The record gives the reactivity of an RNA of 177 nucleotides to 2A3 and DMS. For DMS, 893 sequencing reads were counted. For 2A3, 707 sequencing reads were counted. As a SHAPE reagent, 2A3 marks flexible, mostly unpaired nucleotides at the ribose 2'-OH.
[RMDB]
RNA sequence: GGGAACGACUCGAGUAGAGUCGAAAAUUGGAGCCAUAGGUUUCCGCUGUGAGCCCUAUAAUAACCCUGCAGACUUCUUCCUGGACAUCAUUAAUGGAGAUUCUUCUGCUGUGGUGUUAAAUAGAGAAUGUCGAUCAACAUUCGUGUUGAUCGACAUAAAAGAAACAACAACAACAAC
Reactivity to 2A3 in 0.01 (KOAc 150mM, MgCl2 10mM, bicine 150mM(pH8.5), 24C), signal-to-noise 1, nucleotides 027 to 126: u060u050g000g020a090g020c030c030a080u060a040g050g020u090u130u050c040c020g070c050u080g010u030g130a070g020c000c000c030u060a080u020a090a030u030a000a040c000c010c020u000g040c020a020g010a030c000u020u000c000u160u050c010c000u040g140g050a120c020a160u140c010a060u000u240a090a080u150g010g000a010g000a030u020u000c020u070u010c000u020g000c000u030g080u120g040g010u020g010u050u060a060a100a050u110a030g100a020g060a170
Reactivity to DMS in 0.01 (KOAc 150mM, MgCl2 10mM, bicine 150mM(pH8.5), 24C), signal-to-noise 1, nucleotides 027 to 126: u010u010g030g010a060g050c020c020a090u020a080g010g020u000u000u000c070c080g010c090u020g000u000g000a100g030c020c010c000u000a080u000a040a050u000a090a090c020c000c000u030g000c040a010g010a040c250u000u000c020u000u000c010c050u000g010g010a130c160a040u010c180a090u010u010a120a120u000g000g000a040g020a070u000u000c120u000u000c000u010g000c010u000g000u010g000g000u000g000u000u000a030a070a120u000a140g000a120g000a050